[RMDB]
RNA sequence: GGGAACGACUCGAGUAGAGUCGAAAAGUAUACACCAAGACUCCGUACGGGCGGCUGCUCGCGGAUACCCGUACCUCGGGUUUCCGUCUUGCUCGUAUCGCUCGAGAACGCAAGUUCUUCAGCGAAAAGCACGACAGUGGUCGCUACAUAGCGUGGUACUACCCGAACAGUUCGCUGUUCGGGUAGUAAAAGAAACAACAACAACAAC
Reactivity to 2A3 in 0.01 (KOAc 150mM, MgCl2 10mM, bicine 150mM(pH8.5), 24C), signal-to-noise 1, nucleotides 027 to 156: g040u020a060u070a210c080a040c010c040a010a050g070a130c100u010c060c030g030u060a060c060g030g000g000c020g060g000c070u040g000c030u060c070g030c050g080g010a010u010a000c000c010c010g030u140a200c010c100u070c030g000g000g000u000u040u010c000c000g000u010c020u020u040g000c000u010c020g140u120a180u030c000g000c010u080c040g000a000g010a000a000c000g030c050a030a070g000u000u000c000u020u020c040a000g000c010g000a000a070a000a000g000c010a010c080g090a090c000a010g040u050g000g050u010c000g040c020u040a050c010a040u130a020g040c030g020u050g000g000u030